Source: RMDB library OK2TRN, as collected in RNAgym. Structure probing data (DMS and 2A3) for a 177-nucleotide construct.
RNA sequence: GGGAACGACUCGAGUAGAGUCGAAAAUCGGCGACCCGUCACAGAAGGCCGACCUAUCUGGGAUCAAAGCGAUCUCGCGGCUCCGACAGAUCGUCGCGGGACCCGCGCCGGUGAUCGUGAUCCUCGGCAAGGGCAGUAACUUCGGUUACUGCCCUUGAAAAGAAACAACAACAACAAC
Reactivity to DMS in 0.01 (KOAc 150mM, MgCl2 10mM, bicine 150mM(pH8.5), 24C), signal-to-noise 2, nucleotides 027 to 126: u000c040g000g030c020g000a200c060c030c010g000u010c110a200c190a140g000a110a160g010g000c040c020g020a080c190c020u010a090u010c060u010g010g000g000a010u000c010a060a110a230g020c050g000a000u000c000u000c010g000c030g000g020c020u020c030c010g000a010c070a100g010a060u000c170g000u000c020g020c110g020g000g010a120c070c000c060g000c070g010c260c060g020g000u000g000a030u010c020g020u000g020a050u010c000c010u010c230g000g010
Reactivity to 2A3 in 0.01 (KOAc 150mM, MgCl2 10mM, bicine 150mM(pH8.5), 24C), signal-to-noise 2, nucleotides 027 to 126: u080c000g020g030c030g030a090c000c060c020g170u190c110a090c030a140g220a130a020g140g000c010c000g000a090c020c010u100a130u100c100u080g020g010g030a000u020c040a160a150a050g040c010g000a000u000c050u030c010g060c000g010g030c000u000c030c060g040a000c030a030g230a290u250c170g040u000c000g010c120g010g000g060a070c030c030c000g010c020g020c030c060g090g030u090g000a000u010c020g040u080g010a020u010c000c020u130c060g030g000